[RMDB]
RNA sequence: GGGAACGACUCGAGUAGAGUCGAAAAGGACUAUUCGUAGUCCCGAGAAACCUUUGUGUAGCGUACACAUGGGAGCUUACGGUACCCAUUGGGUACCGACAAGAAGCGAGGAUCAUGUUGACGCUACACUCUGGUCCGAGAGAACCUUCGGGUUCAAUGAUUACUUGUAGUUCGCUACAAGUAAUCAAAAAGAAACAACAACAACAAC
Reactivity to DMS in 0.01 (KOAc 150mM, MgCl2 10mM, bicine 150mM(pH8.5), 24C), signal-to-noise 3, nucleotides 027 to 156: g010g000a020c000u000a070u000u010c250g010u010a020g010u000c000c010c020g010a150g010a160a050a050c010c010u000u000u010g010u000g010u000a020g010c020g020u000a150c080a040c020a030u010g020g020g010a130g020c010u000u000a160c020g000g000u000a010c000c010c000a300u000u020g030g010g010u000a000c010c010g000a040c100a140a220g010a050a070g000c020g000a120g020g010a060u010c000a030u020g020u000u010g030a060c010g010c010u000a000c010a000c020u000c030u010g010g000u000c060c020g010a230g000a170g000a050a030c000c010u000u000c160g030g020g010u010u010c010a100a300
Reactivity to 2A3 in 0.01 (KOAc 150mM, MgCl2 10mM, bicine 150mM(pH8.5), 24C), signal-to-noise 8, nucleotides 027 to 156: g010g000a010c010u020a030u110u120c260g110u100a010g000u010c000c010c020g090a110g130a090a150a040c000c000u010u010u000g000u000g000u000a000g000c010g000u030a100c050a000c000a020u000g010g000g010a020g000c000u010u020a020c010g010g000u000a000c000c000c090a300u190u300g010g000g000u000a000c000c000g020a020c040a080a120g240a040a000g000c010g040a240g030g000a010u020c010a000u010g050u080u140g030a010c000g000c000u000a000c000a000c000u000c000u000g000g000u010c030c030g140a170g010a010g000a060a000c000c000u060u090c280g110g000g000u000u020c010a020a080

The record gives the reactivity of an RNA of 207 nucleotides to DMS and 2A3. The reactions ran in a buffer of 150 mM KOAc, 10 mM MgCl2 and 150 mM bicine (pH 8.5), at 24 C. The 2A3 profile rests on 11,836 reads.